[RMDB]
RNA sequence: GGGAACGACUCGAGUAGAGUCGAAAAGCUUUUCAGUUCGCUGAAAAGCAAAGAAAAGAUCGAAAGAUCAACGCAGAAACGGAGGGAAAUCCGUAACAAAAAAAACACCGAGGUUCGCCUCGGUGAACAAAAUAGGAUUCUUCGGAAUCCUAUUUUGAAAAGAAACAACAACAACAAC
Reactivity to DMS in 0.01 (KOAc 150mM, MgCl2 10mM, bicine 150mM(pH8.5), 24C), signal-to-noise 2, nucleotides 027 to 126: g010c010u010u000u000u010c000a030g020u000u010c240g040c000u010g000a000a000a000a000g020c000a050a040a120g000a120a070a060a130g000a010u000c010g000a080a080a180g010a000u000c000a080a090c240g030c120a130g010a110a140a040c020g000g000a010g000g020g020a120a110a060u000c010c000g030u000a060a070c080a020a020a010a080a070a070a130a100c010a010c000c000g000a010g000g010u000u010c230g010c020c000u000c000g020g030u000g000a020a060
Reactivity to 2A3 in 0.01 (KOAc 150mM, MgCl2 10mM, bicine 150mM(pH8.5), 24C), signal-to-noise 1, nucleotides 027 to 126: g000c020u000u010u010u000c010a020g010u010u130c170g000c050u000g000a000a000a000a000g020c020a000a030a000g010a010a110a000a020g010a020u040c020g020a060a060a020g000a000u000c010a030a070c040g020c070a000g130a090a150a010c030g010g020a030g100g070g070a040a120a060u000c000c030g020u040a040a030c060a090a040a020a000a020a000a000a020c010a000c000c010g000a000g000g050u050u060c170g070c000c000u020c020g010g000u000g020a000a000